[RMDB]
RNA sequence: GGGAACGACUCGAGUAGAGUCGAAAAAGUUUGUUCACAAACUGCAUACAAUAAUGCGAUGUUUUGUGCAAAGCACAAAACUCGAAGAUAAACAGUGAGGCUGAAUUUCUGCCGAACUGUUUAUCUUGACGAGUAUAUUGUUCGCAAUAUACUCGUCAAAAGAAACAACAACAACAAC
Reactivity to 2A3 in 0.01 (KOAc 150mM, MgCl2 10mM, bicine 150mM(pH8.5), 24C), signal-to-noise 6, nucleotides 027 to 126: a000g020u020u020u000g070u250u230c110a050c010a200a020a010c020u060g020c030a080u120a160c060a050a220u200a190a060u190g080c010g030a040u090g020u000u010u010u010g000u000g000c130a280a200a060g000c000a000c000a010a010a010a010c000u000c010g020a030a010g000a000u000a000a010a000c000a000g000u000g010a010g020g000c010u020g040a150a240u260u250u040c040u090g010c010c000g000a000a000c000u000g000u000u000u000a000u000c000u000u030
Reactivity to DMS in 0.01 (KOAc 150mM, MgCl2 10mM, bicine 150mM(pH8.5), 24C), signal-to-noise 5, nucleotides 027 to 126: a010g000u000u000u000g010u000u020c220a110c030a010a010a020c000u000g000c110a110u010a120c150a140a080u010a080a060u000g020c020g010a050u010g010u000u000u000u000g030u000g010c000a120a110a160g020c010a010c000a000a000a000a010c000u000c040g000a100a030g000a000u000a000a000a010c010a000g010u000g010a300g000g010c010u000g010a110a230u000u010u000c060u020g020c000c000g010a240a010c000u000g000u000u000u000a000u000c000u000u000
About this RNA: Conditions: 150 mM KOAc, 10 mM MgCl2 and 150 mM bicine (pH 8.5), 24 C. This 177-nucleotide RNA was probed chemically with 2A3 and DMS. The data come from the RNA Mapping Database (RMDB), library RFMREP. In probing experiments dimethyl sulfate is read out at A N1 and C N3, which are open when not base-paired. Values cover nucleotides 27 to 126.